The record gives the reactivity of an RNA of 177 nucleotides to 2A3 and DMS. The data come from the RNA Mapping Database (RMDB), library TTRDEL. The 2A3 profile rests on 22,441 reads.

[RMDB]
RNA sequence: GGGAACGACUCGAGUAGAGUCGAAAAGAUAUGGACGGAAUGAAGCCGAAGAACGACAACUGGUCGGAAACGACCAGCUAAUCGGGAGGCUUCACCGUCCUAAGUCAAACUUGCCUUCGGGCAAGAAGUAGAUACUUAUCUUCGGAUAAGUAUCUACAAAAGAAACAACAACAACAAC
Reactivity to 2A3 in 0.01 (KOAc 150mM, MgCl2 10mM, bicine 150mM(pH8.5), 24C), signal-to-noise 4, nucleotides 027 to 126: g020a020u040a030u100g000g000a000c020g020g040a280a300u150g000a040a000g010c020c030g100a150a080g040a090a020c020g020a010c020a080a050c090u010g000g010u000c010g000g010a040a030a020c010g000a010c000c000a000g000c010u040a020a080u040c010g010g000g010a050g000g000c000u000u000c000a000c000c010g000u000c000c000u000a010a000g000u000c010a010a030a140c010u000u010g000c000c000u050u070c300g050g000g010c010a000a000g000a010a000
Reactivity to DMS in 0.01 (KOAc 150mM, MgCl2 10mM, bicine 150mM(pH8.5), 24C), signal-to-noise 6, nucleotides 027 to 126: g000a040u000a300u000g000g000a020c000g010g010a100a130u000g020a010a010g030c000c000g000a100a150g010a140a230c010g000a010c130a110a130c010u000g000g000u000c000g010g000a070a060a150c000g010a010c000c000a000g010c030u000a100a240u000c010g000g000g000a120g020g010c000u000u000c000a020c010c000g000u000c000c000u000a010a080g000u000c020a100a110a190c000u000u000g000c000c000u000u010c180g020g000g000c000a000a000g000a040a110